[RMDB]
RNA sequence: GGGAACGACUCGAGUAGAGUCGAAAAGGGGUCGAAUCUACCCACCGCUGGUAGGAGCGAAGAACAUAAAACCCAUCGCAUAUACUGAAGCCUCCACGGUAUAUGCGAUGGGUUUUAUGGGAGCUCCUGAGAGGCGAGGAUUCGACGGAGGCACCCACUAUACUGAUGAGUUCGCUCAUCAGUAUAGAAAAGAAACAACAACAACAAC
Reactivity to DMS in 0.01 (KOAc 150mM, MgCl2 10mM, bicine 150mM(pH8.5), 24C), signal-to-noise 2, nucleotides 027 to 156: g000g000g000g040u000c000g010a040a010u010c020u000a100c050c020c040a100c020c020g010c000u000g000g050u010a050g020g000a020g010c000g010a120a210g010a150a270c010a030u000a010a010a030a020c010c000c010a010u010c010g020c000a020u000a010u000a010c000u000g010a090a100g000c020c010u000c000c010a300c030g010g020u000a000u000a000u000g010c000g010a000u010g000g030g000u000u000u010u000a010u000g010g000g020a090g020c000u000c000c000u000g000a030g000a030g010g020c020g020a220g000g000a070u000u000c000g020a040c020g020g000a090g010g050c010a130c000c010c010a300
Reactivity to 2A3 in 0.01 (KOAc 150mM, MgCl2 10mM, bicine 150mM(pH8.5), 24C), signal-to-noise 2, nucleotides 027 to 156: g060g010g020g000u000c010g000a000a000u000c010u080a130c030c020c030a030c030c000g000c040u060g040g150u170a010g000g010a010g010c010g050a300a010g000a010a000c000a010u010a000a010a000a000c000c000c000a000u000c000g010c000a000u000a010u000a000c000u010g010a090a020g000c000c000u010c010c000a040c010g000g000u000a000u000a000u000g000c000g000a000u000g000g000g000u000u000u000u000a000u000g000g010g000a000g010c000u020c000c000u010g020a040g010a050g040g000c010g020a080g060g000a010u000u000c010g010a000c000g000g000a010g000g010c010a020c010c000c000a030